The record gives the reactivity of an RNA of 170 nucleotides to DMS and 2A3.
The RNA was probed in 150 mM KOAc, 10 mM MgCl2 and 150 mM bicine (pH 8.5) at 24 C.
[RMDB]
RNA sequence: GGGAACGACUCGAGUAGAGUCGAAAAUGGUACUGCGCAUUGGUUGUUUGCGACCCUUGUCUCAACCUAUGUGAUAAUCUUACAAGCCACUAAAUUUACUUUGUGGAACUACUUGUUUGAGACUAUUGAACUAUUGCCUUCGGGCAAUAGAAAAGAAACAACAACAACAAC
Reactivity to DMS in 0.01 (KOAc 150mM, MgCl2 10mM, bicine 150mM(pH8.5), 24C), signal-to-noise 5, nucleotides 027 to 129: u020g020g030u000a100c110u030g030c030g030c030a060u030u030g020g030u010u060g020u050u040u010g030c010g000a100c090c070c000u010u020g010u030c030u040c040a030a050c090c070u060a000u000g040u020g010a030u030a040a080u030c060u040u020a030c030a000a000g000c000c020a030c030u060a010a030a060u060u060u040a090c280u000u000u000g020u000g040g000a050a020c060u050a250c050u040u000g000u010u010u010g000a040g020a080c070u020a060u040u040g000a130a170
Reactivity to 2A3 in 0.01 (KOAc 150mM, MgCl2 10mM, bicine 150mM(pH8.5), 24C), signal-to-noise 6, nucleotides 027 to 129: u080g040g030u090a010c070u100g040c010g000c030a020u050u070g090g010u020u010g000u070u090u120g100c020g030a050c060c000c000u070u180g030u000c030u000c020a000a010c000c000u020a000u050g000u000g050a080u050a150a060u010c000u020u030a000c020a010a010g020c000c000a020c020u130a010a050a150u270u270u120a180c200u070u070u060g020u000g000g020a020a020c030u080a020c010u140u000g050u030u030u020g050a020g040a010c030u050a080u090u110g040a070a040
Overview
For 2A3 the reverse transcriptase was SuperScript II with manganese.